[RMDB]
RNA sequence: GGGAACGACUCGAGUAGAGUCGAAAACAAAGCCAGAUUCUCGUCCUGGCAAGGAACGGAUAAAACUUGAGGAAAACGAGACAUCCACAGGAAAAAGCAGAAAAACUGCAAUCCGAAAACAAACAAAACUACUCAUGCGUUUCGACGCAUGAGUAGUAAAAGAAACAACAACAACAAC
Reactivity to 2A3 in 0.01 (KOAc 150mM, MgCl2 10mM, bicine 150mM(pH8.5), 24C), signal-to-noise 2, nucleotides 027 to 126: c060a010a130a000g000c030c000a040g000a070u120u000c080u000c040g040u030c010c000u010g010g000c000a000a000g040g010a120a000c050g010g000a050u130a170a120a010a040c010u030u050g030a140g040g050a000a060a010a090c010g070a000g010a030c000a000u000c040c000a020c040a100g000g020a000a010a060a060a020g000c020a000g080a020a200a050a000a060c000u010g000c010a000a020u000c000c000g040a020a140a000a030c060a010a140a000c010a030a030a030
Reactivity to DMS in 0.01 (KOAc 150mM, MgCl2 10mM, bicine 150mM(pH8.5), 24C), signal-to-noise 1, nucleotides 027 to 126: c050a070a300a300g050c040c000a000g010a270u000u050c000u000c000g000u000c300c000u000g000g030c070a260a120g000g010a030a300c070g070g000a050u000a030a000a030a050c040u000u000g000a080g000g000a030a000a070a080c040g050a150g160a090c300a000u010c000c070a000c000a000g010g020a110a040a060a000a130g050c000a000g000a080a060a050a090a060c000u060g000c010a290a150u000c000c000g060a110a030a030a090c180a020a000a070c160a010a010a190